[RMDB]
RNA sequence: GGGAACGACUCGAGUAGAGUCGAAAAGAAAGGCAGCCACUGCAGCCCACGGAGCCAGUCGAAGCAUGCUUUUGCAUGCCGCCCACGACUGAGGGCAGCUGCGGCACUGAGGGCAGCUGCCGAAAGACCGUAUGGAUAGGUUCGCCUAUCCAUACGGAAAAGAAACAACAACAACAAC
Reactivity to DMS in 0.01 (KOAc 150mM, MgCl2 10mM, bicine 150mM(pH8.5), 24C), signal-to-noise 4, nucleotides 027 to 126: g010a110a140a140g000g000c030a010g010c010c140a160c110u010g000c160a150g010c060c000c030a100c060g000g010a100g020c000c000a020g000u000c050g010a230a150g000c000a000u000g000c000u020u000u010u010g000c000a000u000g010c010c090g000c080c010c060a300c090g000a060c150u010g010a100g030g000g020c000a100g030c050u010g010c100g000g000c040a070c070u020g010a050g000g000g010c010a090g000c010u000g020c010c000g000a030a080a060g000a160
Reactivity to 2A3 in 0.01 (KOAc 150mM, MgCl2 10mM, bicine 150mM(pH8.5), 24C), signal-to-noise 3, nucleotides 027 to 126: g070a020a090a000g010g000c010a000g010c010c060a150c110u160g050c060a040g010c020c020c000a000c030g030g010a020g030c010c000a020g030u070c030g070a080a020g000c010a010u000g000c010u130u290u300u300g010c030a000u000g000c030c010g000c000c010c010a080c060g250a080c100u160g050a160g010g010g000c000a020g010c020u070g040c010g020g000c020a020c090u100g010a110g010g010g000c000a000g000c010u000g000c010c000g010a020a000a000g040a020